Structure probing data (2A3) for a 207-nucleotide construct. The RNA was probed in 150 mM KOAc, 10 mM MgCl2 and 150 mM bicine (pH 8.5) at 24 C. It was measured as part of the RMDB library OK3TST. For 2A3 the reverse transcriptase was SuperScript II with manganese.
RNA sequence: GGGAACGACUCGAGUAGAGUCGAAAAACAAAGGGCAUUUGGGAGAAAUGGCUCUUGCAUUAAAAAAUGAUUGAAUACUAAAAUACUAAUUUCACUGUUAUUUUAGAAUAAUCAAUUCCAAGAAUUUUGACACAUAAUAGCAGCAAUCACUAUAGAACACUGGGUAAUCAUUCGUGAUUACCCAGUGAAAAGAAACAACAACAACAAC
Reactivity to 2A3 in 0.01 (KOAc 150mM, MgCl2 10mM, bicine 150mM(pH8.5), 24C), signal-to-noise 2, nucleotides 027 to 156: a020c060a020a050a010g000g000g000c000a000u030u030u040g070g000g000a170g050a010a040a030u040g030g000c000u020c000u010u040g020c030a080u110u170a000a060a070a050a000a070u080g000a020u030u060g000a060a000u030a220c000u010a000a010a010a010u000a020c000u020a020a190u050u180u300c020a020c050u030g070u100u010a000u000u010u010u010a000g010a110a020u140a110a000u020c000a000a050u130u000c080c040a040a010g090a040a060u150u150u100u180g060a070c030a030c010a040u130a060a030u050a080g000c030a000g040c040a000a070u170c110a040c020u200a170u270a100g040a090a000